Chemical mapping of a 177-nucleotide RNA with DMS and 2A3. 2A3 adducts were read by reverse transcription with SuperScript II with manganese. The DMS profile rests on 1,596 reads. Conditions: 150 mM KOAc, 10 mM MgCl2 and 150 mM bicine (pH 8.5), 24 C. The 2A3 profile rests on 1,543 reads.
RNA sequence: GGGAACGACUCGAGUAGAGUCGAAAAACAACCUCCUAUGUGCAUGUCUAAAUAGUCACAAUGAAGAUGAAAAUAAGGAUGAUGGGGACGGGGUCCAGGAGGGCCACUGGGAAGGCACUAUCCAGAACCAAAGACAGGUAUUCGUACCUGUCUUUGGAAAAGAAACAACAACAACAAC
Reactivity to DMS in 0.01 (KOAc 150mM, MgCl2 10mM, bicine 150mM(pH8.5), 24C), signal-to-noise 2, nucleotides 027 to 126: a050c100a090a100c050c000u000c020c000u000a140u000g010u000g000c060a070u000g010u000c050u020a050a090a050u000a060g020u000c080a050c100a100a120u020g020a160a070g000a080u010g010a060a050a050a070u010a030a110g000g010a090u000g020a110u000g000g010g010g020a030c100g020g010g010g030u000c030c030a110g010g010a080g000g000g000c030c040a040c030u000g000g010g000a070a080g010g010c100a060c060u000a110u000c030c020a080g000a120a200
Reactivity to 2A3 in 0.01 (KOAc 150mM, MgCl2 10mM, bicine 150mM(pH8.5), 24C), signal-to-noise 2, nucleotides 027 to 126: a030c020a020a040c000c000u000c000c030u030a040u090g030u010g030c040a040u070g050u040c020u070a120a110a090u170a120g080u050c010a020c040a090a120u140g000a060a040g040a100u130g090a010a060a060a090u200a140a030g080g010a050u060g030a030u100g030g000g020g000a000c030g000g030g000g000u040c040c030a020g080g020a060g030g020g020c010c000a060c000u010g060g010g000a060a060g050g000c030a010c070u010a080u130c010c000a020g060a090a050

DMS adducts were read by reverse transcription with MarathonRT.